[RMDB]
RNA sequence: GGGAACGACUCGAGUAGAGUCGAAAAAAGUUGCACCAGGUACGGAUACCAGACGUUGCCAAACAGGGUGAGAUGAGGAUCACCCAUGUACUGUCCCUUGGCAGCCGUACCUGGUGCUGGUGAAAAAUGUAGAGAGCACGUUCGCGUGCUCUCUACAAAAAGAAACAACAACAACAAC
Reactivity to DMS in 0.01 (KOAc 150mM, MgCl2 10mM, bicine 150mM(pH8.5), 24C), signal-to-noise 1, nucleotides 027 to 126: a110a120g010u000u000g030c000a010c000c000a010g020g000u000a000c010g000g000a120u010a090c110c080a070g000a070c210g000u000u000g020c030c030a000a030a020c050a010g000g000g000u000g010a020g020a150u000g000a180g010g020a210u000c000a000c000c000c000a030u000g030u000a030c210u000g000u000c000c040c010u000u000g000g000c000a150g030c000c000g040u010a010c010c020u010g000g000u000g030c000u000g000g030u010g000a020a000a010a160a050
Chemical mapping of a 177-nucleotide RNA with DMS. Conditions: 150 mM KOAc, 10 mM MgCl2 and 150 mM bicine (pH 8.5), 24 C. Values are in units of 0.01, from 0 to 300, in steps of 10. For DMS the reverse transcriptase was MarathonRT.